Structure probing data (2A3 and DMS) for a 177-nucleotide construct. Conditions: 150 mM KOAc, 10 mM MgCl2 and 150 mM bicine (pH 8.5), 24 C. DMS adducts were read by reverse transcription with MarathonRT. The 2A3 profile rests on 7,129 reads.

[RMDB]
RNA sequence: GGGAACGACUCGAGUAGAGUCGAAAACAAAAAAUAAUCCACCCUUGAGUUAGUGGCUCAGGUGGAUUAUUCGUCCAAUCGGCCGAUCCCUUGCAGGGAUCCGAGCUAUUGUUUGACUGAAGGUGUGGAUAUACAGUACGUUCGCGUACUGUAUAUCAAAAGAAACAACAACAACAAC
Reactivity to 2A3 in 0.01 (KOAc 150mM, MgCl2 10mM, bicine 150mM(pH8.5), 24C), signal-to-noise 5, nucleotides 027 to 126: c000a000a090a020a010a000a010u020a000a000u000c010c000a010c000c020c050u040u090g000a000g010u040u130a080g060u150g300g000c000u000c000a000g000g000u000g000g000a000u000u000a000u010u000c000g000u000c010c000a010a010u060c080g020g000c010c010g010a000u000c010c010c000u010u160g120c160a090g010g000g000a000u000c010c090g020a040g000c010u010a020u010u080g090u040u080u120g030a040c050u090g080a080a030g210g040u210g050u130g230
Reactivity to DMS in 0.01 (KOAc 150mM, MgCl2 10mM, bicine 150mM(pH8.5), 24C), signal-to-noise 5, nucleotides 027 to 126: c050a000a020a090a080a040a030u000a010a000u000c000c000a000c000c020c160u010u000g000a020g010u000u000a140g030u010g010g010c000u000c000a050g000g010u000g000g010a000u000u000a010u000u000c080g010u000c010c020a030a030u000c170g060g000c030c040g000a030u000c000c000c000u000u020g020c280a190g000g000g000a010u000c060c080g010a110g030c000u000a020u000u000g000u000u010u010g010a050c010u010g010a070a100g010g010u010g020u010g010